Overview:
An RNA of 177 nucleotides, treated with 2A3 and DMS and read out base by base. Source: RMDB library OK2TRN, as collected in RNAgym.
RNA sequence: GGGAACGACUCGAGUAGAGUCGAAAAGAACCAUUAACCGUAUGGAAUGGGUCUGCACAUACCGUUUGCGUGCUCACACAGAAAUCUUAAGGAGUCUUCAUGGUUAAGUUUGAGAACAAAGACCCACACCAUAUCGUUGAUUCGUCAACGAUAUGGUAAAAGAAACAACAACAACAAC
Reactivity to 2A3 in 0.01 (KOAc 150mM, MgCl2 10mM, bicine 150mM(pH8.5), 24C), signal-to-noise 5, nucleotides 027 to 126: g010a030a020c010c000a010u080u110a030a070c030c050g080u070a070u120g010g050a060a080u040g020g000g000u010c010u050g020c060a030c010a060u090a060c030c040g030u060u120u110g070c040g020u060g020c010u010c010a060c000a010c000a020g140a090a130a050u050c030u090u080a110a090g110g050a130g160u080c030u100u060c090a070u090g050g000u040u050a050a040g020u020u080u100g110a090g010a050a030c030a060a100a010g020a030c000c010c000a020c010
Reactivity to DMS in 0.01 (KOAc 150mM, MgCl2 10mM, bicine 150mM(pH8.5), 24C), signal-to-noise 6, nucleotides 027 to 126: g000a140a140c010c010a090u000u010a100a070c040c090g010u010a040u000g020g020a140a080u010g010g010g010u000c020u000g020c140a130c070a050u000a050c080c120g010u000u000u000g030c120g010u000g010c040u000c030a040c070a050c080a060g000a060a080a060u000c040u000u000a070a060g000g000a130g000u010c040u000u000c080a060u000g000g010u000u010a070a110g010u000u000u000g000a080g000a050a090c100a040a060a080g010a050c000c010c030a150c230